[RMDB]
RNA sequence: GGGAACGACUCGAGUAGAGUCGAAAACAUCUUUCCUCCCUACACAGUGACUCCAGCUUGGGAGGGGCAGGGCUAUGCUGAGCCAGCACUCCCUGUGGUGUCUGCCUGCCACGUGCAGCUCUGGAGUAAAACCUGGAGAAGUUCGCUUCUCCAGGAACAGAAACAUCUACUUCGGUAGAUGUUUCUGAAAAGAAACAACAACAACAAC
Reactivity to DMS in 0.01 (KOAc 150mM, MgCl2 10mM, bicine 150mM(pH8.5), 24C), signal-to-noise 1, nucleotides 027 to 156: c090a060u000c100u000u000u040c040c020u000c000c000c000u000a190c110a160c080a130g050u000g000a030c010u000c020c020a120g030c070u010u010g010g030g010a060g020g000g060g010c010a140g020g020g000c080u000a060u010g020c130u030g010a210g030c050c010a100g040c010a030c020u010c000c000c030u020g000u020g000g020u000g030u000c030u010g030c100c040u030g010c000c020a090c090g000u000g020c050a070g010c040u000c030u020g000g000a120g020u000a120a050a100a160c030c000u000g000g000a030g010a050a030g020u000u000c300g020c000u000u000c000u010c040c000a010g020g000a020a070
Reactivity to 2A3 in 0.01 (KOAc 150mM, MgCl2 10mM, bicine 150mM(pH8.5), 24C), signal-to-noise 3, nucleotides 027 to 156: c040a110u100c110u130u130u100c010c010u090c000c000c020u090a070c170a020c010a090g080u030g090a020c000u000c010c010a000g040c060u060u070g020g010g000a010g000g000g030g030c010a070g060g000g000c020u130a030u140g050c020u130g080a080g110c110c040a010g020c010a000c030u040c000c000c000u010g010u040g010g010u030g020u030c020u020g040c010c000u030g040c010c030a170c130g050u180g000c000a020g000c010u020c030u050g000g000a000g000u000a000a070a000a020c000c000u000g000g000a000g000a010a000g010u060u210c260g010c130u000u000c000u000c000c000a000g000g000a000a000

The record gives the reactivity of an RNA of 207 nucleotides to DMS and 2A3. Conditions: 150 mM KOAc, 10 mM MgCl2 and 150 mM bicine (pH 8.5), 24 C. DMS adducts were read by reverse transcription with MarathonRT. High DMS reactivity at an A or C suggests that its Watson-Crick edge is free.